[RMDB]
RNA sequence: GGGAACGACUCGAGUAGAGUCGAAAAAAUGGCCAUUUGGUAUCUGACACAUGGUCUGCUCUUGUGACUAUUAGUCUCGAAAUAUGGCAUAAAACAAGGGGGAACGGAUCUUGCGACAUUGGUGGUUGAGGAAAUGGGUUUUCGAACCCAUUUCCUCAAAAGAAACAACAACAACAAC
Reactivity to 2A3 in 0.01 (KOAc 150mM, MgCl2 10mM, bicine 150mM(pH8.5), 24C), signal-to-noise 2, nucleotides 027 to 126: a010a010u170g010g000c010c000a020u000u000u080g020g000u140a210u030c090u230g050a000c000a000c000a010u040g040g000u000c100u080g010c000u010c020u000u210g030u010g000a010c010u000a030u150u230a070g020u000c020u060c010g000a010a090a000u230a040u100g000g000c000a060u080a090a020a000a000c030a050a060g040g000g000g000g070a060a000c000g000g000a000u000c070u000u060g010c000g000a030c190a120u060u120g000g000u040g020g000u060u030